[RMDB]
RNA sequence: GGGAACGACUCGAGUAGAGUCGAAAACACAGAUUUCGAUCUGUGCCAGAGGGGUCGAGUGUAAGGAACUACACCUUUGAUCAGGCUGAAGCCUCCACGGCCUGGGAGGUGCUUGAGCUCGACGGAGGCACCCGUGAGAACACCGUUCGCGGUGUAAAUAUCAUUUCGAUUUCGAUCGAAAUGAUAUAAAAGAAACAACAACAACAAC
Reactivity to DMS in 0.01 (KOAc 150mM, MgCl2 10mM, bicine 150mM(pH8.5), 24C), signal-to-noise 2, nucleotides 027 to 156: c010a040c000a030g000a030u010u010u000c260g030a050u000c010u000g010u010g040c000c080a100g050a120g040g030g040g030u000c000g020a030g030u010g010u020a070a160g020g000a190a150c010u010a070c010a030c000c000u010u000u000g010a060u000c000a030g000g030c010u000g000a050a140g010c010c010u000c010c010a300c020g000g000c000c000u020g010g020g010a000g020g030u000g010c030u000u000g000a300g020c010u010c040g010a050c000g030g020a040g160g040c010a110c000c000c000g110u000g000a170g000a240a090c000a030c010c010g030u000u000c220g000c030g030g000u000g010u000a020a080
Reactivity to 2A3 in 0.01 (KOAc 150mM, MgCl2 10mM, bicine 150mM(pH8.5), 24C), signal-to-noise 5, nucleotides 027 to 156: c020a000c010a000g040a010u090u120u300c230g100a020u040c010u010g000u010g030c060c010a090g050a060g040g030g010g000u020c000g010a010g020u080g010u170a080a060g070g060a140a080c070u180a030c120a000c010c000u220u300u100g030a040u020c000a000g000g010c000u020g020a090a020g010c000c010u000c000c000a020c000g000g000c000c000u000g000g010g000a020g000g000u050g090c050u040u090g050a030g010c010u000c010g010a030c020g010g000a000g000g000c000a030c010c020c000g030u090g100a100g020a040a030c030a030c040c010g030u090u090c160g020c020g110g010u030g000u030a020a080